This 207-nucleotide RNA was probed chemically with 2A3. The RNA was probed in 150 mM KOAc, 10 mM MgCl2 and 150 mM bicine (pH 8.5) at 24 C. 2A3 adducts were read by reverse transcription with SuperScript II with manganese.

RNA sequence: GGGAACGACUCGAGUAGAGUCGAAAAGCGUACUACUGUAUUGAGACGCUUAGACCUAUAUUGUCAGACAUCCCAAAUAGGAUGUCUUGGAUUUAUAUAGUCAGCGUCUUCUUUACAGUAUCGCAAAGGAUUUGCCUACUUCGGUAGGCAAAUCCAACUUCACUUUCACGUUCGCGUGAAAGUGAAGAAAAGAAACAACAACAACAAC
Reactivity to 2A3 in 0.01 (KOAc 150mM, MgCl2 10mM, bicine 150mM(pH8.5), 24C), signal-to-noise 2, nucleotides 027 to 156: g020c010g020u080a100c080u000a000c000u030g000u000a010u010u020g000a000g000a000c000g000c010u020u040a080g010a000c000c000u000a010u000a000u010u010g020u030c020a010g000a010c010a000u020c040c030c040a220a270a100u300a120g000g000a000u000g000u000c030u000u070g010g000a000u000u300u000a000u000a000u000a010g010u020c000a000g000c000g040u000c000u160u120c010u000u030u000a000c010a000g000u000a010u090c000g000c000a000a080a080g000g000a000u000u000u000g000c000c000u010a010c000u040u110c220g100g000u000a000g000g000c000a000a000a000u020c000c000a000a000